[RMDB]
RNA sequence: GGGAACGACUCGAGUAGAGUCGAAAAGCAAACGACGAACGUUUCGCACUCGCUGCUUAAUAACCAGUGAGCCCUACAACAGCAGGCCGAUGGGCUGGGCAAGGGGUCUUUAGCGCAAGUUGAAGGCUCCCGGCUGUAGGGUCAUACACAUCGGCUGGGUUAACUAAUCGUUCGCGAUUAGUUAACCAAAAGAAACAACAACAACAAC
Reactivity to DMS in 0.01 (KOAc 150mM, MgCl2 10mM, bicine 150mM(pH8.5), 24C), signal-to-noise 1, nucleotides 027 to 156: g020c040a040a050a050c050g020a120c110g010a090a170c090g020u000u010u000c080g000c000a190c040u000c020g000c010u000g000c000u020u000a110a130u010a130a120c120c010a050g020u000g000a190g020c000c000c000u000a040c020a040a090c000a230g000c020a170g000g040c000c020g010a120u000g020g010g000c000u000g020g020g050c060a130a050g010g010g000g010u000c000u000u000u030a000g010c000g010c300a100a180g010u000u000g050a030a030g040g000c020u010c000c000c000g030g050c000u000g080u000a040g010g000g040u010c040a050u000a070c040a020c000a080u000c000g020g040c050u000g000
Reactivity to 2A3 in 0.01 (KOAc 150mM, MgCl2 10mM, bicine 150mM(pH8.5), 24C), signal-to-noise 3, nucleotides 027 to 156: g010c000a020a010a010c010g110a020c050g050a130a050c030g020u010u030u080c140g010c030a020c000u000c000g000c000u010g000c000u050u020a040a010u040a060a060c000c000a010g000u000g020a010g000c000c000c000u020a020c010a130a000c010a010g010c010a010g000g070c000c000g010a010u010g000g000g030c010u020g000g030g000c040a060a050g010g000g000g000u020c000u000u000u000a010g000c010g000c090a110a060g000u000u000g000a010a000g000g000c000u040c010c000c000g030g000c010u020g020u020a010g040g000g020u050c010a030u090a180c110a010c000a040u000c000g000g000c010u060g060
The record gives the reactivity of an RNA of 207 nucleotides to DMS and 2A3. For DMS the reverse transcriptase was MarathonRT. Conditions: 150 mM KOAc, 10 mM MgCl2 and 150 mM bicine (pH 8.5), 24 C. DMS (dimethyl sulfate) methylates the pairing face of unpaired adenines and cytosines. For DMS, 2,832 sequencing reads were counted.